An RNA of 177 nucleotides, treated with DMS and 2A3 and read out base by base. Values cover nucleotides 27 to 126. 2A3 adducts were read by reverse transcription with SuperScript II with manganese. The data come from the RNA Mapping Database (RMDB), library M2PK90. Conditions: 150 mM KOAc, 10 mM MgCl2 and 150 mM bicine (pH 8.5), 24 C. For DMS, 950 sequencing reads were counted.
RNA sequence: GGGAACGACUCGAGUAGAGUCGAAAAGCAACAUAGAUCGUUCUAUUAACGAACACGCGCGGAUCGUCGGUGGUCGGCGAGCCCACGGACGUACUUGAACGCGCGAACGAGUAAAAAUCGCCGGCAACCUGUGUAAAGUCUUCGGACUUUACACAGGAAAAGAAACAACAACAACAAC
Reactivity to DMS in 0.01 (KOAc 150mM, MgCl2 10mM, bicine 150mM(pH8.5), 24C), signal-to-noise 2, nucleotides 027 to 126: g000c040a080a030c040a150u010a070g030a120u010c010g010u000u000c050u000a190u020u030a080a100c170g000a090a090c130a180c090g000c010g020c010g000g030a110u000c000g030u010c000g000g110u000g000g010u000c010g010g000c010g040a050g040c120c010c000a000c060g020g020a010c020g010u010a030c180u000u020g040a040a150c020g020c010g000c000g000a000a020c090g000a080g010u000a040a100a000a060a070u000c000g000c000c000g000g000c160a070a190
Reactivity to 2A3 in 0.01 (KOAc 150mM, MgCl2 10mM, bicine 150mM(pH8.5), 24C), signal-to-noise 2, nucleotides 027 to 126: g050c020a030a090c000a100u200a070g120a090u040c050g030u040u000c040u060a240u220u180a120a050c080g020a040a030c060a020c060g030c000g010c000g080g030a110u080c020g060u000c050g180g000u000g000g000u020c000g000g020c030g020a080g140c000c020c010a010c000g070g010a010c000g000u040a060c030u090u180g060a130a010c010g000c020g030c000g010a000a000c020g030a010g110u120a000a100a020a000a090u010c010g010c000c000g060g010c040a050a030
The 2A3 profile rests on 1,688 reads.